[RMDB]
Chemical mapping of a 177-nucleotide RNA with 2A3 and DMS.
It was measured as part of the RMDB library OK2TST.
2A3 is a SHAPE reagent: it acylates the 2'-hydroxyl of flexible nucleotides of all four kinds.
Reactivities are given for positions 27 through 126.
The 2A3 profile rests on 2,267 reads.
DMS adducts were read by reverse transcription with MarathonRT.
RNA sequence: GGGAACGACUCGAGUAGAGUCGAAAAGCGGUAAUCGACGCCAGAUCGCCUUUCAGCACUGCCAUGGGUUGCGUUACCGGUACGUUCAGGUUUUCCACGCUCUCUAAUUUGCCGUUUGAAAAUGUCAGAAGUGACCAUUUUUCGAAAUGGUCACUUCAAAAGAAACAACAACAACAAC
Reactivity to 2A3 in 0.01 (KOAc 150mM, MgCl2 10mM, bicine 150mM(pH8.5), 24C), signal-to-noise 2, nucleotides 027 to 126: g040c030g000g030u060a010a110u060c050g030a020c100g030c010c030a030g020a100u100c040g030c010c000u010u160u100c020a020g040c040a040c070u060g040c000c040a070u080g000g020g000u050u060g050c020g010u030u040a020c000c000g020g010u020a010c030g010u010u050c040a060g050g020u050u030u060u000c010c000a020c020g030c000u030c000u000c000u030a080a130u050u050u050g060c000c010g020u020u030u020g080a070a050a020a020u100g080u080c040a010
Reactivity to DMS in 0.01 (KOAc 150mM, MgCl2 10mM, bicine 150mM(pH8.5), 24C), signal-to-noise 3, nucleotides 027 to 126: g010c020g000g020u010a050a040u010c060g020a070c080g020c040c060a080g010a080u000c090g030c030c060u000u010u010c090a080g020c050a090c050u000g030c030c050a110u000g010g000g030u000u000g010c060g020u000u000a050c020c020g000g000u010a050c110g010u010u000c040a040g000g010u000u000u000u010c020c050a100c070g000c040u000c020u010c030u050a070a110u000u000u000g010c020c020g020u000u010u000g010a100a030a050a110u020g000u000c100a160